[RMDB]
RNA sequence: GGGAACGACUCGAGUAGAGUCGAAAAGAAAAUGAGAGCCUCACUCUCUGAGGGAAAACAAAAUCUGACGAUAGGUCAGCUAUCUAAAACAAAAUGCUCUGUACGAGAGCCGUACUAAAGAAAGAAAGGGAAACAUAGUGUUCGCACUAUGUUUCCCAAAAGAAACAACAACAACAAC
Reactivity to DMS in 0.01 (KOAc 150mM, MgCl2 10mM, bicine 150mM(pH8.5), 24C), signal-to-noise 1, nucleotides 027 to 126: g050a050a090a010a130u000g000a090g000a130g010c100c070u000c220a020c060u000c070u000c040u010g040a300g000g050g040a050a040a080a110c230a020a000a120a110u000c030u000g000a160c120g000a140u020a090g000g000u000c040a030g060c140u000a060u190c050u060a000a060a250a090c000a000a080a000a120u000g000c000u000c000u000g060u030a100c120g000a030g040a010g000c090c080g010u000a060c070u030a000a090a170g000a010a010a010g000a010a000a090
Reactivity to 2A3 in 0.01 (KOAc 150mM, MgCl2 10mM, bicine 150mM(pH8.5), 24C), signal-to-noise 1, nucleotides 027 to 126: g060a000a070a020a120u230g000a020g000a000g050c000c000u000c000a050c000u000c000u000c060u010g010a050g000g100g010a030a150a030a070c040a000a020a000a270u120c030u010g030a030c060g250a130u140a030g040g040u220c000a010g000c000u000a030u000c030u050a010a000a000a050c120a070a040a010a010u130g000c000u000c000u050g060u000a030c020g000a000g000a000g130c000c000g010u020a040c000u050a000a190a090g100a010a050a040g130a040a070a200